[RMDB]
RNA sequence: GGGAACGACUCGAGUAGAGUCGAAAAGAAUCUGACAAGUAAUGACAAGAAUGACUGUGAAUAUGUUGUUAGUUGUCAGUUAUGGAUGUUCGGUGUCUUAUUCACAGUCACAGAUCAGACAUCGGAGGAUAGUAUAGUAUUUCGAUACUGUGCUAUCAAAAGAAACAACAACAACAAC
Reactivity to DMS in 0.01 (KOAc 150mM, MgCl2 10mM, bicine 150mM(pH8.5), 24C), signal-to-noise 9, nucleotides 027 to 126: g010a100a060u020c010u000g000a030c020a030a040g010u020a020a020u010g000a040c050a100a140g020a140a130u020g010a020c010u000g020u010g000a030a030u020a080u020g000u000u000g010u000u000a020g010u000u000g010u000c010a030g010u020u010a070u030g020g020a180u030g010u000u000c000g000g010u000g000u000c000u000u020a050u000u000c000a010c010a010g010u000c010a090c170a090g010a080u020c150a030g000a010c010a000u000c000g000g010a020g010
Reactivity to 2A3 in 0.01 (KOAc 150mM, MgCl2 10mM, bicine 150mM(pH8.5), 24C), signal-to-noise 9, nucleotides 027 to 126: g050a010a070u040c010u010g010a010c020a050a010g070u030a040a030u040g020a010c030a050a080g120a140a160u150g010a020c020u020g020u030g040a070a050u180a170u270g000u010u000g000u010u010a090g050u060u000g010u000c010a000g000u020u030a100u080g170g040a070u150g080u090u040c000g000g010u000g000u000c010u030u090a040u050u050c030a010c020a040g020u040c040a040c070a080g140a040u110c020a010g000a000c000a000u010c010g010g000a010g030